[RMDB]
RNA sequence: GGGAACGACUCGAGUAGAGUCGAAAAUGCGCUCAGGCUUUCGAUCCGUCGUUGGCCACGGCGGCAGACUUGCCUGAUGAGCGGCAGGGAAUCGUUACGGGACCACUUGUCCGAUGGUCCCAUACAGGUAGGAAGGAGAGUUCGCUCUCCUUCCUACAAAAGAAACAACAACAACAAC
Reactivity to DMS in 0.01 (KOAc 150mM, MgCl2 10mM, bicine 150mM(pH8.5), 24C), signal-to-noise 4, nucleotides 027 to 126: u030g010c020g010c020u010c010a010g000g030c000u000u020u000c020g000a180u020c010c000g030u000c010g010u000u060g010g000c210c120a190c010g000g000c000g010g000c300a230g000a060c100u010u030g000c000c000u000g000a110u000g010a060g020c010g020g050c040a070g010g000g050a070a060u020c050g030u010u000a060c090g020g000g010a020c000c000a020c040u010u030g000u020c030c030g000a300u000g000g000u000c000c000c000a020u010a010c110a130g020
Reactivity to 2A3 in 0.01 (KOAc 150mM, MgCl2 10mM, bicine 150mM(pH8.5), 24C), signal-to-noise 5, nucleotides 027 to 126: u090g000c010g020c010u000c000a000g010g000c030u040u030u050c080g120a210u120c010c010g010u010c010g010u030u060g090g010c040c010a000c000g000g000c000g030g000c000a000g010a060c060u100u160g020c020c000u040g030a090u080g020a020g040c030g070g000c030a030g050g030g030a010a140u130c110g010u140u120a060c100g010g000g000a000c000c000a020c070u150u200g130u080c030c000g050a070u000g000g000u000c010c000c000a000u020a000c010a010g150